[RMDB]
RNA sequence: GGGAACGACUCGAGUAGAGUCGAAAAACUUAUCGACCGCUUUCAUGAGGCCAAUAUUGCCUUCCUGAAUGAGAUCGAGGAACUGAAGGCCGCGGUUCGUGUACUUCUUGGCAAUCGAAAUCACCAACGUAUUUAGGCCAUUCGUGGCCUAAAUACGAAAAGAAACAACAACAACAAC
Reactivity to 2A3 in 0.01 (KOAc 150mM, MgCl2 10mM, bicine 150mM(pH8.5), 24C), signal-to-noise 2, nucleotides 027 to 126: a000c020u070u070a060u050c020g020a020c010c000g000c010u000u130u080c070a050u120g090a060g040g000c010c040a130a130u080a150u140u080g010c000c010u020u100c010c010u010g090a120a110u090g050a030g040a090u030c050g030a010g040g010a010a060c040u090g080a140a030g030g000c000c060g000c020g090g020u110u140c070g000u030g010u000a040c000u020u030c000u010u030g010g000c020a020a030u020c040g060a030a000a030u100c080a040c050c020a110a080
Reactivity to DMS in 0.01 (KOAc 150mM, MgCl2 10mM, bicine 150mM(pH8.5), 24C), signal-to-noise 3, nucleotides 027 to 126: a130c120u010u000a080u010c010g000a040c020c020g020c020u010u000u000c090a080u010g000a060g010g020c030c160a110a110u000a130u030u030g000c050c010u000u010c040c050u010g030a050a050u020g000a070g010a070u000c030g020a050g010g000a080a080c060u000g050a130a070g040g010c020c040g010c030g000g000u000u000c060g000u010g000u010a040c140u010u000c050u000u000g010g010c060a100a050u000c070g020a020a070a110u000c110a080c060c060a040a170
Chemical mapping of a 177-nucleotide RNA with 2A3 and DMS. Reactivities are rounded to 0.1 and cut off at 0 and 3. The RNA was probed in 150 mM KOAc, 10 mM MgCl2 and 150 mM bicine (pH 8.5) at 24 C. DMS adducts were read by reverse transcription with MarathonRT. The data come from the RNA Mapping Database (RMDB), library OK2TST. The DMS profile rests on 1,963 reads.